Overview
The record gives the reactivity of an RNA of 207 nucleotides to 2A3. For 2A3, 1,553 sequencing reads were counted.
[RMDB]
RNA sequence: GGGAACGACUCGAGUAGAGUCGAAAAGACACGCUGGGACGUCUCGAGUGGUGGCACUUCUUUGAUCUUCUGAAGCGCGCACGGAAGGGAGAAGUGCACACCACUAAGACAGGACGUCCUGUGCUGAAGCGCGCACGGCAACCGAAAGGUGCGGGGGGAAAAUGCAUCUGUUCGCAGAUGCAUUUUCAAAAGAAACAACAACAACAAC
Reactivity to 2A3 in 0.01 (KOAc 150mM, MgCl2 10mM, bicine 150mM(pH8.5), 24C), signal-to-noise 1, nucleotides 027 to 156: g070a030c040a000c140g010c020u060g020g010g000a000c000g010u010c040u000c020g080a040g010u000g000g010u020g020g000c000a000c010u020u030c010u230u300u000g030a030u020c000u020u000c000u010g050a160a010g040c000g000c000g000c010a010c050g020g010a000a000g020g000g000a010g010a000a000g000u040g060c050a010c000a000c050c000a000c000u000a020a000g020a010c020a010g000g000a000c000g000u010c010c010u000g010u030g000c010u040g030a090a040g000c010g010c000g020c030a010c040g000g000c020a030a040c000c050g060a100a030a030g000g020u030g010c030g000g010g000g010g040